[RMDB]
Structure probing data (2A3 and DMS) for a 207-nucleotide construct. 2A3 is a SHAPE reagent: it acylates the 2'-hydroxyl of flexible nucleotides of all four kinds. DMS adducts were read by reverse transcription with MarathonRT. Values cover nucleotides 27 to 156.
RNA sequence: GGGAACGACUCGAGUAGAGUCGAAAACUCGCGCGAACAUAGAGGCGUGGAGCGCGACAUGAAUCAGCCUCAAUUAGAUUAAUGGUCGACAGAUCAGCGGCGAUCAGCGACCGAAUUAGAAGCCGCGACCGGAAGAGGAGACGCUCGACGGACGUCAAUUAUGGCGUAUGUUCGCAUACGCCAUAAUAAAAGAAACAACAACAACAAC
Reactivity to 2A3 in 0.01 (KOAc 150mM, MgCl2 10mM, bicine 150mM(pH8.5), 24C), signal-to-noise 2, nucleotides 027 to 156: c000u000c000g050c000g000c000g080a210a050c020a020u120a120g000a010g020g000c000g010u000g000g020a080g000c000g000c000g020a060c050a100u300g120a070a120u060c070a030g000c000c000u000c000a000a160u170u170a000g100a160u110u020a040a040u190g000g000u000c000g030a070c120a120g000a050u070c000a020g030c020g090g000c090g010a000u020c050a000g030c000g020a030c000c000g010a030a040u010u000a000g050a280a020g000c000c060g000c020g000a020c030c020g020g000a050a020g000a040g040g000a120g000a070c080g090c090u020c090g070a030c000g000g060a010c100g030u070c060a000
Reactivity to DMS in 0.01 (KOAc 150mM, MgCl2 10mM, bicine 150mM(pH8.5), 24C), signal-to-noise 1, nucleotides 027 to 156: c020u000c040g050c000g000c000g050a240a110c060a040u000a130g020a110g010g080c060g050u000g010g030a240g000c040g000c000g000a060c060a070u040g020a120a120u010c110a150g030c000c000u000c020a160a210u000u000a190g000a140u000u000a050a120u000g000g000u000c020g020a080c110a080g000a060u000c080a200g030c070g050g030c000g000a040u000c030a230g020c070g010a040c020c010g000a010a070u000u010a110g000a050a020g010c000c040g010c070g000a170c020c000g000g000a080a110g000a170g010g010a250g010a050c050g040c020u000c050g010a100c050g030g010a050c000g000u000c000a160